[RMDB]
RNA sequence: GGGAACGACUCGAGUAGAGUCGAAAAUCGGUUCUUCUUCGAUCCGGACCGGCUCAUCUCGGCAAGAGGCGGCAGUCCUCAGUGCUCUUACUCUUUCCUAUAAAGAGGAGACUGCUGGACUCGCCGCGAAAACAAAAAGGUUCGCCUUUUUGUUUUCAAAAGAAACAACAACAACAAC
Reactivity to DMS in 0.01 (KOAc 150mM, MgCl2 10mM, bicine 150mM(pH8.5), 24C), signal-to-noise 3, nucleotides 027 to 126: u000c010g000g000u000u000c010u020u000c230u010u000c200g000a030u010c000c020g000g000a110c160c010g010g000c040u000c020a230u020c030u010c010g000g000c140a100a120g010a110g010g000c000g010g030c010a010g020u000c000c000u000c010a010g010u000g020c040u030c020u000u000a300c020u000c010u000u000u000c230c170u000a100u000a040a020a010g000a030g000g000a020g020a040c010u000g010c200u000g010g000a020c020u000c150g030c000c010g000c000
Reactivity to 2A3 in 0.01 (KOAc 150mM, MgCl2 10mM, bicine 150mM(pH8.5), 24C), signal-to-noise 2, nucleotides 027 to 126: u060c000g000g000u020u020c010u210u030c020u100u180c080g030a030u010c010c000g020g020a020c050c000g000g000c010u000c010a130u040c020u010c000g030g000c040a090a040g040a050g180g000c000g000g000c020a000g010u000c000c010u000c000a020g010u090g200c020u000c000u080u160a230c000u050c000u020u050u070c030c050u160a150u210a280a020a000g010a000g010g000a000g010a000c000u000g050c060u020g000g000a010c000u000c070g020c020c010g000c000